[RMDB]
RNA sequence: GGGAACGACUCGAGUAGAGUCGAAAAGUGUCGGACUCGCAAGUGCGAAUAUAUUUUAUCCCUAAACAGGGAGUGGAAAGCACGUCCUGGAGUGGAAAACACGUCCAUCCCAAAGCCAGAAAUGAAAUCGUUCUAUUUGGUUCGCCAAAUAGAACGAAAAAGAAACAACAACAACAAC
Reactivity to DMS in 0.01 (KOAc 150mM, MgCl2 10mM, bicine 150mM(pH8.5), 24C), signal-to-noise 2, nucleotides 027 to 126: g020u000g060u000c020g060g010a050c060u010c070g000c080a170a150g010u000g010c000g020a030a080u010a060u010a030u010u020u010u000a160u010c010c000c010u000a090a060a090c220a030g000g010g000a070g000u000g020g000a120a150a150g000c020a030c030g000u000c160c040u000g010g000a120g000u000g000g000a140a050a150a020c100a010c010g010u000c050c030a130u000c000c000c010a060a070a130g010c110c040a130g000a050a040a090u000g000a020a050a070
Reactivity to 2A3 in 0.01 (KOAc 150mM, MgCl2 10mM, bicine 150mM(pH8.5), 24C), signal-to-noise 1, nucleotides 027 to 126: g050u070g050u020c020g020g050a030c000u000c040g040c050a000a100g030u010g080c010g080a150a000u100a000u000a000u060u070u130u050a060u010c000c010c000u090a180a170a020c050a070g000g010g000a000g010u080g030g100a040a070a000g040c010a000c030g120u060c010c040u020g070g000a040g000u070g020g060a030a090a060a010c070a000c010g130u050c010c070a070u090c000c000c040a010a010a000g040c070c040a090g120a100a050a050u160g090a060a040a170

This 177-nucleotide RNA was probed chemically with DMS and 2A3. For DMS, 1,070 sequencing reads were counted. Conditions: 150 mM KOAc, 10 mM MgCl2 and 150 mM bicine (pH 8.5), 24 C. The data come from the RNA Mapping Database (RMDB), library M2PK90.